[RMDB]
RNA sequence: GGGAACGACUCGAGUAGAGUCGAAAAUAGGCGAACGAGAGGCCCUCUCCUGUGCGGAGUUGUCACGCUGACAUAAUUGUUAUGAUGUCCGAUUCCGGUAGCAUCGCGGCGAUGCUUUCAUAGGACAUCUUAUGAACCCAAGUGCUUCGGGGAAGCACCAUCGCAUGAUCUUCGGAUCAUGCGAUGGAAAAGAAACAACAACAACAAC
Reactivity to 2A3 in 0.01 (KOAc 150mM, MgCl2 10mM, bicine 150mM(pH8.5), 24C), signal-to-noise 3, nucleotides 027 to 156: u210a050g020g000c030g030a030a020c070g000a040g010a080g170g010c050c050c000u000c020u000c020c020u110g090u170g050c060g030g000a010g010u110u000g060u090c000a010c090g040c050u050g030a010c010a030u210a110a120u090u150g090u080u080a070u170g010a000u000g000u030c000c000g050a060u220u010c110c060g040g060u060a000g000c000a000u000c010g020c070g240g060c110g000a000u010g000c000u040u100u060c050a090u060a050g000g000a000c000a000u000c000u020u040a050u040g020a010a040c000c000c020a060a000g070u010g070c010u040u050c090g030g000g010g060a000a000g020c010a010
Reactivity to DMS in 0.01 (KOAc 150mM, MgCl2 10mM, bicine 150mM(pH8.5), 24C), signal-to-noise 1, nucleotides 027 to 156: u000a060g010g010c010g020a150a120c070g010a120g020a080g030g000c050c020c010u000c030u000c020c050u020g060u050g020c020g000g010a140g000u000u040g030u000c030a120c040g000c020u000g000a160c060a110u010a050a120u000u000g010u000u000a090u020g020a030u000g000u000c000c010g030a270u000u020c130c080g000g000u000a020g020c010a000u000c010g020c080g040g000c200g050a030u000g030c000u000u010u000c010a120u020a140g030g000a010c020a050u000c020u000u000a040u000g000a090a100c090c010c020a050a080g030u000g030c000u000u000c020g020g010g000g020a100a070g010c030a160